[RMDB]
RNA sequence: GGGAACGACUCGAGUAGAGUCGAAAACGGCAAAAAAGCAAACUUGACCACCAAGGAUAAAAGAGAUCUUAUCCAAGGAUGCAAAAGAUAAUCUCACUUUUGACACCCACUGAUGUCGAACUUAAAGAAAACCGAGACUACUUCGGUAGUCUCGGAACAUGGCGAAUAUCUUCGGAUAUUCGCCAUGAAAAGAAACAACAACAACAAC
Reactivity to 2A3 in 0.01 (KOAc 150mM, MgCl2 10mM, bicine 150mM(pH8.5), 24C), signal-to-noise 3, nucleotides 027 to 156: c010g050g020c060a040a070a000a030a030a050g080c070a100a080a050c050u080u040g040a070c010c020a020c010c020a080a040g030g000a020u030a030a080a030a050g210a020g020a090u080c060u050u000a000u000c020c020a020a050g050g000a040u040g000c010a020a040a020a040g000a070u120a180a120u090c070u020c050a040c010u020u020u020u050g000a020c010a050c020c030c010a060c080u100g090a100u040g050u080c020g030a130a090c050u080u090a110a060a060g080a040a080a060a030c010c000g000a000g000a000c000u010a000c000u020u070c150g030g000u000a000g000u000c020u000c000g000g010a000a000
Reactivity to DMS in 0.01 (KOAc 150mM, MgCl2 10mM, bicine 150mM(pH8.5), 24C), signal-to-noise 1, nucleotides 027 to 156: c100g030g000c110a000a140a100a070a020a080g010c000a120a150a200c080u000u000g000a300c300c000a070c030c010a070a300g000g010a010u000a000a010a010a080g010a200g010a130u000c070u020u010a040u010c000c000a070a230g000g000a040u000g000c020a010a080a080a080g000a090u000a030a050u010c070u030c050a070c000u000u000u020u000g000a110c010a110c000c010c010a120c070u000g020a010u010g000u030c000g030a040a210c130u000u000a040a110a110g030a010a030a110a130c000c000g000a030g000a040c000u000a030c000u000u010c300g020g000u000a010g000u000c000u000c000g000g040a000a050